RNA sequence: GGGAACGACUCGAGUAGAGUCGAAAAAGGGCUGGCUCUGAUGGGCUUCAGGGCCUAGGCCUCCUGGGCCAGAUCCAGAGUCAGAGCGUGGGUAUGGCCAGCACAUGGGGCUCAUCCCACACUCAGGGUACAGGGGAUGGUUCGCCAUCCCCUGUACAAAAGAAACAACAACAACAAC
Reactivity to 2A3 in 0.01 (KOAc 150mM, MgCl2 10mM, bicine 150mM(pH8.5), 24C), signal-to-noise 1, nucleotides 027 to 126: a000g110g050g040c010u000g010g000c010u000c000u020g030a030u070g050g050g020c020u170u150c020a030g000g000g050c000c000u020a070g030g060c010c020u040c000c000u010g010g020g020c000c030a060g010a200u060c050c010a010g010a010g040u040c010a010g000a000g010c020g010u020g000g000g010u250a050u060g010g000c040c020a040g100c070a080c000a210u190g100g000g060g000c040u100c030a030u050c010c000c000a000c000a020c020u070c040a000g160g040
Reactivity to DMS in 0.01 (KOAc 150mM, MgCl2 10mM, bicine 150mM(pH8.5), 24C), signal-to-noise 1, nucleotides 027 to 126: a130g000g010g010c030u000g000g010c000u000c000u010g000a080u000g000g000g000c030u010u010c080a070g010g000g000c010c050u010a050g020g000c050c050u010c050c040u010g000g010g010c000c020a080g000a100u010c080c030a040g010a050g020u000c020a030g010a020g020c040g040u000g010g010g010u000a070u010g010g000c010c000a060g000c150a130c200a120u010g000g000g000g000c000u010c010a070u000c020c010c000a010c030a000c120u000c060a170g020g010